[RMDB]
RNA sequence: GGGAACGACUCGAGUAGAGUCGAAAACGGCCGAUGUUGCCCAGCAGCAGCUGGAUGAUCGACCCGGCGCGGAUGAACUGGGCGCCCAUCGAGUGCUGGGUCCACCCCACGCUGUACACCAGUGCGGAUUUUACGCCCGUUUCGACGGGCGUAAAAUAAAAGAAACAACAACAACAAC
Reactivity to DMS in 0.01 (KOAc 150mM, MgCl2 10mM, bicine 150mM(pH8.5), 24C), signal-to-noise 2, nucleotides 027 to 126: c080g020g020c010c070g060a130u000g000u000u010g000c020c070c000a070g010c000a150g030c020a120g000c010u020g000g020a180u020g010a120u010c190g020a090c040c060c000g000g010c030g010c110g020g000a020u020g000a050a110c090u000g000g000g000c100g020c090c170c050a020u050c000g000a080g050u010g000c010u000g000g010g000u020c010c000a120c010c010c000c000a040c090g020c000u000g000u020a100c150a050c140c000a040g020u020g010c110g000g020
Reactivity to 2A3 in 0.01 (KOAc 150mM, MgCl2 10mM, bicine 150mM(pH8.5), 24C), signal-to-noise 1, nucleotides 027 to 126: c010g040g000c050c020g000a040u060g010u110u140g070c000c030c000a000g000c010a000g000c010a000g030c000u010g000g060a140u150g070a140u080c010g030a050c040c000c000g010g000c020g010c030g030g020a050u050g020a130a090c070u030g020g050g010c000g000c020c010c000a010u020c010g090a120g090u060g010c010u000g000g060g020u020c010c020a020c010c000c000c010a020c090g030c020u000g010u140a050c070a040c000c060a050g040u060g110c020g020g010

An RNA of 177 nucleotides, treated with DMS and 2A3 and read out base by base. The RNA was probed in 150 mM KOAc, 10 mM MgCl2 and 150 mM bicine (pH 8.5) at 24 C. DMS adducts were read by reverse transcription with MarathonRT.